[RMDB]
RNA sequence: GGGAACGACUCGAGUAGAGUCGAAAACGGUCUAUGAAUCGCCUGAUGCGGAUGUUAUUCCUCACCCCGGUCUAUCAGGGGAUGCGCCGCCGCUAUCAUCUCUAUAUGCAGCAAGGCUGUACGGUGCUGAGCGUCGAUAAUUCGUUAUCGACGCUCAAAAAGAAACAACAACAACAAC
Reactivity to DMS in 0.01 (KOAc 150mM, MgCl2 10mM, bicine 150mM(pH8.5), 24C), signal-to-noise 1, nucleotides 027 to 126: c070g000g020u000c090u000a070u010g040a120a060u000c050g000c050c050u000g000a050u010g010c060g020g020a040u010g010u000u010a120u000u000c060c030u020c140a120c040c020c010c030g000g010u010c100u000a060u000c050a060g040g010g020g010a020u000g020c120g020c090c100g000c020c030g010c060u000a050u000c060a050u000c050u000c040u010a080u010a100u010g020c070a000g030c030a070a140g000g000c000u000g030u000a040c100g000g020u000g010c080
Reactivity to 2A3 in 0.01 (KOAc 150mM, MgCl2 10mM, bicine 150mM(pH8.5), 24C), signal-to-noise 1, nucleotides 027 to 126: c000g010g010u070c050u070a160u190g080a050a030u080c030g000c080c000u060g020a030u060g000c000g060g000a030u070g050u100u120a090u120u050c000c000u110c020a050c020c030c020c000g030g000u010c160u120a110u130c050a060g000g010g040g020a000u040g010c010g000c000c000g030c040c010g060c020u090a040u130c010a050u050c030u030c030u110a130u000a040u280g000c010a030g030c000a110a200g180g040c010u000g020u030a020c120g050g030u050g000c050